[RMDB]
RNA sequence: GGGAACGACUCGAGUAGAGUCGAAAAGGCUUAGUUAGACCAACCGUCUCUUGAUCGUCUGUGGAAACUGAAUCAGGAACACCCCAGAGAGCUGGCUCUGGAUGUAAUUCACAGCUUCAUUUAAUUAUUAUCAUCAAAGUUAAUGAAGGCCAUAAAACUGCUAAAUUAUCUUCGGAUAAUUUAGCAGAAAAGAAACAACAACAACAAC
Reactivity to DMS in 0.01 (KOAc 150mM, MgCl2 10mM, bicine 150mM(pH8.5), 24C), signal-to-noise 1, nucleotides 027 to 156: g030g020c010u000u000a110g060u010u010a070g000a030c050c000a060a120c080c040g010u000c030u000c020u000u010g010a110u010c020g010u010c060u000g000u020g030g000a140a080a120c040u000g010a100a060u000c010a130g020g000a090a050c000a050c060c040c010c010a090g010a030g000a140g040c080u000g000g000c010u020c010u000g010g000a070u020g000u000a020a040u010u010c050a090c060a080g010c000u000u010c030a030u000u010u010a030a060u000u000a160u020u020a030u000c100a140u000c030a070a070a160g020u010u000a030a040u010g010a010a010g010g040c040c030a090u000a040a100a160a080
Reactivity to 2A3 in 0.01 (KOAc 150mM, MgCl2 10mM, bicine 150mM(pH8.5), 24C), signal-to-noise 2, nucleotides 027 to 156: g030g010c040u060u050a020g050u100u140a040g080a140c020c040a050a080c030c050g050u020c030u000c000u070u150g060a170u040c040g040u020c060u040g030u100g050g080a120a070a080c040u020g050a110a000u110c040a070g060g030a020a010c010a040c030c040c000c000a000g010a020g000a010g000c050u050g070g000c000u010c000u020g040g050a100u030g020u020a080a050u120u100c030a010c000a100g040c010u070u020c010a010u030u020u100a150a010u010u060a050u080u110a100u170c030a020u040c020a150a090a000g000u000u000a000a000u030g000a010a000g010g000c030c000a060u190a100a080a020a090
This 207-nucleotide RNA was probed chemically with DMS and 2A3.
For 2A3, 827 sequencing reads were counted.
For DMS the reverse transcriptase was MarathonRT.
Reactivities are given for positions 27 through 156.